[RMDB]
RNA sequence: GGGAACGACUCGAGUAGAGUCGAAAAGCAGCAGCACGUUCGUGUCGCAGUCGGCGAACGUGUCGACUUCCUGCAACAGCGCCUGCAUGCAAUCCGAGUGCGCGACGAGCGUGCUCGGCUCGAGCGACGAGCAUAAAUCCUUCGGGAUUUAUGCUCGAAAAGAAACAACAACAACAAC
Reactivity to DMS in 0.01 (KOAc 150mM, MgCl2 10mM, bicine 150mM(pH8.5), 24C), signal-to-noise 3, nucleotides 027 to 126: g020c100a060g010c030a080g010c030a000c000g000u000u000c000g010u000g000u010c070g060c180a110g010u000c020g020g010c030g000a010a040c040g020u000g000u010c020g000a100c190u010u000c050c020u000g000c130a060a050c130a070g020c020g010c140c010u010g000c000a090u020g000c080a190a130u020c010c010g020a020g000u000g000c000g010c000g000a070c190g000a250g000c000g020u000g000c000u000c000g010g000c100u000c040g010a110g000c030g010a110
Reactivity to 2A3 in 0.01 (KOAc 150mM, MgCl2 10mM, bicine 150mM(pH8.5), 24C), signal-to-noise 2, nucleotides 027 to 126: g010c050a010g010c000a010g040c000a000c020g000u030u000c010g000u040g170u140c060g010c070a040g090u080c030g030g020c000g040a040a030c030g020u050g000u000c000g000a020c000u030u020c000c000u020g010c030a130a030c000a060g070c000g030c020c000u040g010c040a100u100g000c000a020a130u000c000c010g000a010g010u020g020c010g020c020g030a100c120g030a050g000c000g000u010g000c000u010c010g010g000c000u030c010g040a030g010c050g050a080
An RNA of 177 nucleotides, treated with DMS and 2A3 and read out base by base. 2A3 adducts were read by reverse transcription with SuperScript II with manganese. For 2A3, 3,254 sequencing reads were counted. DMS adducts were read by reverse transcription with MarathonRT. In probing experiments dimethyl sulfate is read out at A N1 and C N3, which are open when not base-paired. The reactions ran in a buffer of 150 mM KOAc, 10 mM MgCl2 and 150 mM bicine (pH 8.5), at 24 C.